[RMDB]
RNA sequence: GGGAACGACUCGAGUAGAGUCGAAAACUUCCCAACUGCCUCACAAGGACAUUCAUGGCAACCGUAAUUCAUCCUCGCCCUCUGAUGAACUUGCUGGGCAGGAAGCAUCAGUAUGAGUAACAGGCAGCUAUAAUUGCAAGUUCGCUUGCAAUUAUAGAAAAGAAACAACAACAACAAC
Reactivity to 2A3 in 0.01 (KOAc 150mM, MgCl2 10mM, bicine 150mM(pH8.5), 24C), signal-to-noise 5, nucleotides 027 to 126: c000u020u010c000c000c000a000a040c000u000g000c000c000u110c020a010c000a010a010g010g020a040c010a050u050u060c050a020u150g020g000c030a040a050c050c040g110u110a070a150u200u170c060a090u100c050c040u060c060g000c010c000c000u000c000u010g010a010u010g000a010a010c000u000u010g020c050u020g010g000g010c000a000g000g010a030a010g040c010a030u060c020a020g100u120a120u180g090a040g040u040a040a020c020a050g050g030c010a000g030
Reactivity to DMS in 0.01 (KOAc 150mM, MgCl2 10mM, bicine 150mM(pH8.5), 24C), signal-to-noise 7, nucleotides 027 to 126: c300u000u000c010c000c000a180a240c030u000g000c010c010u000c280a080c030a050a030g000g010a240c030a030u000u000c070a020u000g000g000c020a090a110c280c140g000u010a070a090u000u010c130a120u010c040c050u010c300g000c000c010c010u000c010u000g000a020u000g000a060a150c030u000u000g010c070u000g010g000g000c000a030g010g010a090a070g000c070a040u000c050a080g000u010a070u010g010a110g010u000a060a050c080a060g000g020c140a070g010

Chemical mapping of a 177-nucleotide RNA with 2A3 and DMS. It was measured as part of the RMDB library RFMREP. The RNA was probed in 150 mM KOAc, 10 mM MgCl2 and 150 mM bicine (pH 8.5) at 24 C. DMS adducts were read by reverse transcription with MarathonRT. The DMS profile rests on 6,447 reads. 2A3 is a SHAPE reagent: it acylates the 2'-hydroxyl of flexible nucleotides of all four kinds.